An RNA of 207 nucleotides, treated with DMS and read out base by base. It was measured as part of the RMDB library RNAMAK. The RNA was probed in 150 mM KOAc, 10 mM MgCl2 and 150 mM bicine (pH 8.5) at 24 C.
[RMDB]
RNA sequence: GGGAACGACUCGAGUAGAGUCGAAAAGCCAUGUUCGCAUGGCGGUCCGCGUACUACUCGCAAUUACUUGGAUUUACUUCUACCCACCACUUCCCAAAUAGGAAGUGAGGAAGUUGUCAGUAAUGCGAGUAUCGCUCCUCUAAACGUUCGCGUUUAAUUUAAAAGUGAGCUUCGGCUCACUUUUAAAAAAAGAAACAACAACAACAAC
Reactivity to DMS in 0.01 (KOAc 150mM, MgCl2 10mM, bicine 150mM(pH8.5), 24C), signal-to-noise 1, nucleotides 027 to 156: g000c000c000a040u010g020u000u000c250g010c010a090u000g010g020c000g000g030u000c040c020g000c000g020u010a110c100u000a060c000u010c000g050c010a070a060u000u000a030c020u000u000g100g030a030u000u020u000a020c000u000u000c000u020a060c070c000c010a300c080c020a030c030u000u010c000c000c000a110a150a300u000a040g000g010a010a040g020u000g000a020g000g000a030a050g020u000u000g020u000c000a070g000u010a010a000u010g010c010g010a020g000u000a020u000c000g050c000u000c020c030u010c020u000a070a160a070c030g010u020u000c060g020c250g030u000u000u010a050a240